[RMDB]
RNA sequence: GGGAACGACUCGAGUAGAGUCGAAAACGGGAAGCGGCGGAUCAUACUUUUUACUGACGGGGAGGAUACCCGGGGAACCAUGGAUGGUAUUGAACGGCUGUUGAAUGCCCGGGGUAUCGGGGUGGUAAACACACACCAGGUUCGCCUGGUGUGUGUUAAAAGAAACAACAACAACAAC
Reactivity to 2A3 in 0.01 (KOAc 150mM, MgCl2 10mM, bicine 150mM(pH8.5), 24C), signal-to-noise 2, nucleotides 027 to 126: c000g050g000g020a020a020g030c030g100g010c020g030g000a040u080c000a090u100a180c070u040u110u060u070u260a100c060u030g090a110c050g000g000g000g000a070g120g000a030u110a100c040c020c000g030g000g000g030a090a060c080c000a010u000g070g000a020u000g010g110u040a080u170u210g130a210a040c070g010g030c010u030g030u050u010g130a150a050u130g040c000c000c000g010g020g000g000u070a030u030c000g000g010g000g000u060g040g020u110a050
Reactivity to DMS in 0.01 (KOAc 150mM, MgCl2 10mM, bicine 150mM(pH8.5), 24C), signal-to-noise 2, nucleotides 027 to 126: c150g020g000g050a100a160g000c190g020g010c100g000g060a070u030c140a080u010a050c070u010u000u050u010u020a130c180u000g000a070c180g000g000g000g020a080g000g000a080u010a030c010c010c010g040g000g000g000a150a060c180c090a110u020g020g010a120u010g000g070u000a070u040u050g000a060a060c150g000g000c050u020g040u000u010g000a040a080u020g000c020c020c000g000g010g040g020u020a010u000c020g000g000g000g000u020g000g000u000a080
This 177-nucleotide RNA was probed chemically with 2A3 and DMS. 2A3 adducts were read by reverse transcription with SuperScript II with manganese. Values cover nucleotides 27 to 126. DMS (dimethyl sulfate) methylates the pairing face of unpaired adenines and cytosines. The DMS profile rests on 2,441 reads.